[RMDB]
RNA sequence: GGGAACGACUCGAGUAGAGUCGAAAACAUGGAAGGCAGCAGGCGCGUAAAUUACCCAAUCCUGACUUAGGGAGGUAGUGAAAAUAAAUACCGAUAUGGUGGGUUUAUCCUACUAUAAUUGGAAUGACAGUAAGACAAACUUCGGUUUGUCUUACUGAAAAGAAACAACAACAACAAC
Reactivity to 2A3 in 0.01 (KOAc 150mM, MgCl2 10mM, bicine 150mM(pH8.5), 24C), signal-to-noise 2, nucleotides 027 to 126: c040a020u080g100g030a020a020g040g000c030a010g000c000a000g020g010c030g010c010g050u060a030a060a050u040u050a070c000c020c000a010a020u070c030c030u070g110a200c060u120u120a030g010g010g040a010g000g020u050a010g050u020g120a080a020a000a050u170a020a090a030u120a140c010c000g010a000u000a000u020g000g000u000g010g030g000u040u150u100a080u100c010c000u040a010c010u000a010u020a110a180u030u010g030g000a060a060u100g040a020
Reactivity to DMS in 0.01 (KOAc 150mM, MgCl2 10mM, bicine 150mM(pH8.5), 24C), signal-to-noise 3, nucleotides 027 to 126: c080a080u010g000g010a080a070g000g010c020a050g020c040a050g020g020c090g020c060g000u010a050a060a070u000u000a110c030c020c050a130a150u000c030c040u000g010a090c160u010u000a090g020g020g010a040g020g000u000a020g020u010g010a050a040a090a070u020a040a060a110u000a100c020c010g010a010u000a000u000g000g010u010g000g010g010u000u010u010a140u020c000c010u000a000c000u000a000u000a040a080u010u010g020g020a110a120u010g000a240
The data come from the RNA Mapping Database (RMDB), library RFMREP. Chemical mapping of a 177-nucleotide RNA with 2A3 and DMS. The 2A3 profile rests on 1,487 reads.